[RMDB]
RNA sequence: GGGAACGACUCGAGUAGAGUCGAAAAUGAAUAGAGCAUUGCCUGGGUUGACAGAUAUUACUUGUUCUAUAGGAGUGAACCCACACAACUAUGAAUGUUUUUGCUGACCAGAGACCCUUAGUUGUCACGAAAACAGAACGUUCGCGUUCUGUUUUCGAAAAGAAACAACAACAACAAC
Reactivity to DMS in 0.01 (KOAc 150mM, MgCl2 10mM, bicine 150mM(pH8.5), 24C), signal-to-noise 1, nucleotides 027 to 126: u010g010a040a110u000a070g000a090g010c040a050u030u000g000c080c000u000g000g010g030u000u000g000a090c060a010g010a100u000a090u010u000a100c130u000u000g010u000u000c040u010a030u000a060g000g010a230g010u010g010a050a160c000c040c020a270c080a070c020a030a080c050u000a020u000g000a060a050u000g020u000u000u000u000u000g030c080u000g000a040c100c030a050g000a050g010a100c010c110c030u000u000a070g000u020u000g000u000c130a110